Chemical mapping of a 177-nucleotide RNA with 2A3.
It was measured as part of the RMDB library OK1LIB.
Values are in units of 0.01, from 0 to 300, in steps of 10.
For 2A3, 454 sequencing reads were counted.
The reactions ran in a buffer of 150 mM KOAc, 10 mM MgCl2 and 150 mM bicine (pH 8.5), at 24 C.
[RMDB]
RNA sequence: GGGAACGACUCGAGUAGAGUCGAAAACUUUCUUCAUGUCGUGAUGUAACGAAAUAUUAUGAGCCAACCUGUAGUACUCUAUUAAUCUUGCACACAAACCAUAAAAAGCAGCCCAUUCACAAAGAGGGACGGCAAAUGGUUUCGACCAUUUGCCGUCAAAAGAAACAACAACAACAAC
Reactivity to 2A3 in 0.01 (KOAc 150mM, MgCl2 10mM, bicine 150mM(pH8.5), 24C), signal-to-noise 1, nucleotides 027 to 126: c000u000u000u030c050u070u080c020a090u050g030u080c070g120u090g240a090u010g010u240a000a080c140g010a000a010a000u290a070u100u170a080u220g030a000g000c000c000a010a040c000c030u010g000u120a010g040u030a030c010u000c000u000a070u030u180a210a000u000c000u020u300g010c010a040c120a030c060a030a030a150c000c000a010u050a060a250a000a000a040g110c170a020g000c000c000c000a000u070u000c100a170c020a120a030a000g010a050g000g060